[RMDB]
RNA sequence: GGGAACGACUCGAGUAGAGUCGAAAAGAUAUGGACUUAGUACUCCAUCGAUCUUAGCACUAUACAGAUCUUAUCGGAAACGAUAAGAUCUGUACGAAUGCUAAGGGAGGAGGCUAAGUCCUAAGUCCAUCUAGCAGUUGUUCGCAACUGCUAGAUGAAAAGAAACAACAACAACAAC
Reactivity to DMS in 0.01 (KOAc 150mM, MgCl2 10mM, bicine 150mM(pH8.5), 24C), signal-to-noise 3, nucleotides 027 to 126: g000a080u010a300u000g010g000a000c000u000u000a000g030u000a220c010u010c000c010a300u010c220g010a050u000c000u000u000a010g010c010a020c080u000a300u000a000c000a000g010a000u000c000u000u000a010u010c000g000g010a160a130a200c000g000a010u000a020a010g010a000u000c000u000g000u000a010c140g000a040a130u000g000c000u000a010a010g000g010g010a040g020g010a050g000g000c000u000a010a010g000u000c000c000u000a000a050g000u000c040
Reactivity to 2A3 in 0.01 (KOAc 150mM, MgCl2 10mM, bicine 150mM(pH8.5), 24C), signal-to-noise 3, nucleotides 027 to 126: g070a030u110a080u170g020g010a010c020u010u000a000g000u290a300c020u050c010c030a270u300c050g000a040u030c000u000u020a000g030c000a000c090u130a070u030a290c000a000g000a010u000c010u020u000a000u020c020g050g030a090a030a090c010g000a010u000a010a010g010a000u010c000u000g000u020a000c020g030a240a130u020g000c000u000a000a000g000g010g020a030g000g000a000g020g030c010u000a000a000g000u000c010c000u010a020a000g000u030c020